[RMDB]
RNA sequence: GGGAACGACUCGAGUAGAGUCGAAAAUUGGAGAGCACCUCGGGCCGAAGGGUUGAGUAGCACUCAAAGGGAGGAAUCCACUCGGAGUAGAACAGAGAAAUCACCUCCAGAGGACCCCUUCAGCGAAGUACCGACCAGUUCGCUGGUCGGAAAAGAAACAACAACAACAAC
Reactivity to 2A3 in 0.01 (KOAc 150mM, MgCl2 10mM, bicine 150mM(pH8.5), 24C), signal-to-noise 3, nucleotides 027 to 129: u090u100g050g000a020g000a000g020c020a040c010c000u010c020g010g000g000c000c020g060a060a050g030g010g010u010u020g030a000g020u080a040g000c030a040c090u040c090a080a050a030g040g000g010a050g020g040a030a060u030c000c000a040c060u010c020g000g000a030g000u160a080g010a200a050c110a030g070a030g000a030a070a030u070c030a050c010c020u010c010c000a020g050a010g010g000a020c000c000c020c000u030u080c050a010g000c000g030a060a000g000u020a080
Reactivity to DMS in 0.01 (KOAc 150mM, MgCl2 10mM, bicine 150mM(pH8.5), 24C), signal-to-noise 4, nucleotides 027 to 129: u000u000g030g010a010g050a050g030c110a000c060c040u020c100g040g020g040c090c030g000a000a000g020g010g050u040u000g040a090g070u020a120g040c130a300c080u000c080a030a010a040g010g030g010a060g000g000a090a140u030c030c050a080c050u040c100g000g000a040g000u050a060g020a120a040c130a220g060a070g000a140a080a050u020c040a090c170c010u020c000c010a070g020a130g060g030a120c080c030c050c020u020u010c020a110g000c030g000a100a050g000u000a000